[RMDB]
RNA sequence: GGGAACGACUCGAGUAGAGUCGAAAAGCAGUUGGGUGCGGCUUUGUCCCAUGGCUUUGGUCAGUGCUUCGUCGAGCUUGUCGAAUGCGGGGGUAGCAUCGUCCUCGCCUUUACCCAGUGCCACCUGACAAAUCCGAGAGUUCGCUCUCGGAUUUGUAAAAGAAACAACAACAACAAC
Reactivity to 2A3 in 0.01 (KOAc 150mM, MgCl2 10mM, bicine 150mM(pH8.5), 24C), signal-to-noise 3, nucleotides 027 to 126: g060c000a030g010u110u090g020g010g000u030g020c050g010g040c010u030u060u060g090u050c040c000c000a030u070g030g000c090u110u060u100g060g010u110c060a040g070u020g070c000u050u030c020g190u040c040g020a050g050c060u060u080g060u060c060g050a090a050u090g050c000g000g000g000g000g060u030a050g050c010a070u030c040g020u040c020c010u010c040g040c000c000u070u050u100a070c000c000c000a000g020u030g030c000c020a080c000c030u040g020
Reactivity to DMS in 0.01 (KOAc 150mM, MgCl2 10mM, bicine 150mM(pH8.5), 24C), signal-to-noise 2, nucleotides 027 to 126: g010c010a010g020u010u010g020g000g110u020g010c110g000g000c000u000u000u000g010u000c020c040c000a110u020g000g010c000u000u020u030g000g010u020c070a160g010u000g010c040u000u010c060g040u020c000g020a150g000c010u010u000g000u000c110g000a040a080u030g010c040g000g000g030g000g000u010a060g000c090a070u000c060g010u000c000c030u020c030g030c020c060u000u020u020a040c070c050c000a160g030u010g020c050c030a080c050c040u010g020

This 177-nucleotide RNA was probed chemically with 2A3 and DMS.
The DMS profile rests on 2,849 reads.
In probing experiments dimethyl sulfate is read out at A N1 and C N3, which are open when not base-paired.
For 2A3, 2,008 sequencing reads were counted.